[RMDB]
RNA sequence: GGGAACGACUCGAGUAGAGUCGAAAAGCCGAAGAGUUCGCUCUUCGGCGACGAAUUUCGCGUAGAUGAGAGUCUACAGUACUAGCCAUCCCAGAUGUACAAAUAAGCAUUGCUUCGGCAAUGCUAAGUACCGUUUUCGUUUCGACGAAAACGGUACAAAAGAAACAACAACAACAAC
Reactivity to DMS in 0.01 (KOAc 150mM, MgCl2 10mM, bicine 150mM(pH8.5), 24C), signal-to-noise 2, nucleotides 027 to 126: g000c000c000g010a010a000g010a010g000u000u020c250g040c020u000c020u000u000c010g010g010c000g000a040c080g000a220a160u010u030u000c070g020c150g000u010a010g010a010u000g000a280g020a180g000u000c020u010a020c010a020g020u010a020c010u000a080g020c050c050a170u000c000c000c010a160g010a160u010g000u020a070c070a090a090a060u050a140a020g030c000a000u010u000g010c010u000u010c210g020g020c000a010a010u000g000c000u000a010a080
Reactivity to 2A3 in 0.01 (KOAc 150mM, MgCl2 10mM, bicine 150mM(pH8.5), 24C), signal-to-noise 2, nucleotides 027 to 126: g000c010c010g000a000a000g040a000g040u080u140c150g000c140u000c000u000u020c020g000g150c000g040a020c020g070a070a160u100u170u270c160g030c060g030u030a000g000a050u050g050a040g000a020g070u000c000u020a010c000a000g020u000a010c030u050a020g110c040c030a060u070c030c020c010a000g030a110u140g030u030a010c020a050a070a070u220a110a000g010c000a000u000u000g020c020u040u120c220g040g000c000a000a000u000g000c010u000a010a000

Description
The record gives the reactivity of an RNA of 177 nucleotides to DMS and 2A3. Reactivities are given for positions 27 through 126. The reactions ran in a buffer of 150 mM KOAc, 10 mM MgCl2 and 150 mM bicine (pH 8.5), at 24 C. The data come from the RNA Mapping Database (RMDB), library M2PK50.